[RMDB]
RNA sequence: GGGAACGACUCGAGUAGAGUCGAAAAUCUGAAUCCUUCGGGAUUCAGAAAAGGCGGAGGGCCCGCCGGAACCGCUAUACAGGUGGAGGUUCCAAACCACCGAAAGGACUAACUUCGGUUAGUCCAACUUUUACAAAGACUUCGGUCUUUGUAAAAGAAAAGAAACAACAACAACAAC
Reactivity to 2A3 in 0.01 (KOAc 150mM, MgCl2 10mM, bicine 150mM(pH8.5), 24C), signal-to-noise 1, nucleotides 027 to 126: u070c000u000g000a020a010u000c000c030u000u020c100g080g000g010a000u040u000c010a020g020a030a060a000a010g000g010c000g030g030a080g020g050g030c160c000c030g100c000c000g000g000a000a020c020c000g010c080u120a050u110a270c080a090g120g220u110g050g120a080g000g050u090u060c030c000a000a000a000c020c000a010c000c010g090a100a060a000g010g010a000c010u000a020a000c000u030u130c300g070g000u000u040a020g000u010c000c010a010a010
Reactivity to DMS in 0.01 (KOAc 150mM, MgCl2 10mM, bicine 150mM(pH8.5), 24C), signal-to-noise 1, nucleotides 027 to 126: u000c000u010g000a000a010u010c000c010u000u010c190g050g000g000a020u000u010c020a000g010a030a060a110a120g000g000c010g000g000a090g000g000g020c240c020c000g020c010c010g050g020a050a010c020c000g000c010u010a050u020a140c300a160g000g010u000g000g020a060g000g000u000u000c010c010a090a130a060c000c020a060c000c010g000a060a120a120g000g020a010c000u000a000a000c010u000u020c150g030g000u010u010a000g000u000c000c000a010a020
Chemical mapping of a 177-nucleotide RNA with 2A3 and DMS.
Conditions: 150 mM KOAc, 10 mM MgCl2 and 150 mM bicine (pH 8.5), 24 C.
The data come from the RNA Mapping Database (RMDB), library M2PK50.
For DMS the reverse transcriptase was MarathonRT.
Values cover nucleotides 27 to 126.
The DMS profile rests on 949 reads.